[RMDB]
RNA sequence: GGGAACGACUCGAGUAGAGUCGAAAAAUGCUAAGUGCCUGGUCUAAUAUCCCUAGGCAGGAAGUGACAGAGAAGUAUCCAGAUUCUGCCUCGUGUAGGCUCAACUGCACGAUCCAAGCACUUAACCAUGUCACACAUUGCUGCUCACAUCAAGGGAUGGAUAAAAUGGGUUCGCCCAUUUUAUCCAAAAAGAAACAACAACAACAAC
Reactivity to DMS in 0.01 (KOAc 150mM, MgCl2 10mM, bicine 150mM(pH8.5), 24C), signal-to-noise 2, nucleotides 027 to 156: a110u010g010c020u000a000a020g020u010g000c000c010u000g000g040u010c070u020a060a130u010a060u000c000c020c020u000a050g020g040c050a050g000g010a060a090g020u000g020a110c020a120g000a130g000a090a100g010u000a080u000c030c020a180g010a200u000u000c020u010g000c020c000u000c000g040u000g030u000a030g040g000c170u000c240a060a170c020u000g010c010a020c030g000a150u000c030c010a020a040g000c010a030c020u000u000a020a080c020c040a100u000g020u000c030a090c070a170c130a180u000u000g000c040u000g070c020u000c060a110c090a050u000c020a120a070g020g010g010a220
Reactivity to 2A3 in 0.01 (KOAc 150mM, MgCl2 10mM, bicine 150mM(pH8.5), 24C), signal-to-noise 3, nucleotides 027 to 156: a000u090g030c010u030a040a020g020u010g020c020c010u060g000g030u070c060u030a070a070u060a070u120c020c020c000u020a040g020g000c020a010g000g020a120a050g020u050g030a030c010a050g100a000g030a100a040g110u070a100u070c050c010a030g020a140u070u030c010u060g000c010c010u000c000g000u000g000u000a000g040g020c030u050c140a080a230c010u020g000c000a010c000g000a000u000c010c000a040a000g010c010a000c000u030u010a020a020c030c010a030u080g020u070c020a020c000a010c010a130u070u170g010c030u040g010c000u050c010a100c020a180u200c120a050a090g050g010g030a010